[RMDB]
RNA sequence: GGGAACGACUCGAGUAGAGUCGAAAAUCAAGGGAUGCCUUGCUCAUCCUAAUAGGAAUGUCAUUUGUUAAGAGAAGGACGAUUUUUUCAGUCAUUCAGUGCCCAUACAAAACAUGAAGAAGGCAAAACACCUUGAGAUGUUCGCAUCUCAAGGUGUAAAAGAAACAACAACAACAAC
Reactivity to 2A3 in 0.01 (KOAc 150mM, MgCl2 10mM, bicine 150mM(pH8.5), 24C), signal-to-noise 2, nucleotides 027 to 126: u110c050a050a070g050g000g000a030u030g010c000c040u070u100g000c050u060c030a090u050c000c000u110a130a140u100a120g040g040a070a070u070g060u120c060a140u010u090u100g030u130u160a110a030g040a010g030a110a000g030g010a020c030g030a080u120u000u030u070u160u050c070a070g000u000c010a020u020u030c030a010g030u050g080c000c010c000a030u060a040c050a020a130a070a010c000a000u040g030a030a050g030a010a000g060g000c020a000a060a000
Reactivity to DMS in 0.01 (KOAc 150mM, MgCl2 10mM, bicine 150mM(pH8.5), 24C), signal-to-noise 2, nucleotides 027 to 126: u010c060a130a130g000g010g000a140u000g020c030c050u010u000g000c080u000c050a100u000c030c020u000a100a140u000a090g000g040a150a070u010g010u010c070a100u020u000u020g020u000u010a090a130g010a100g000a060a030g010g010a020c020g000a000u000u000u010u000u010u000c070a130g020u000c020a080u000u000c020a040g010u020g020c010c020c030a150u010a040c120a040a050a070a060c070a060u000g010a110a070g010a080a020g030g010c020a010a100a110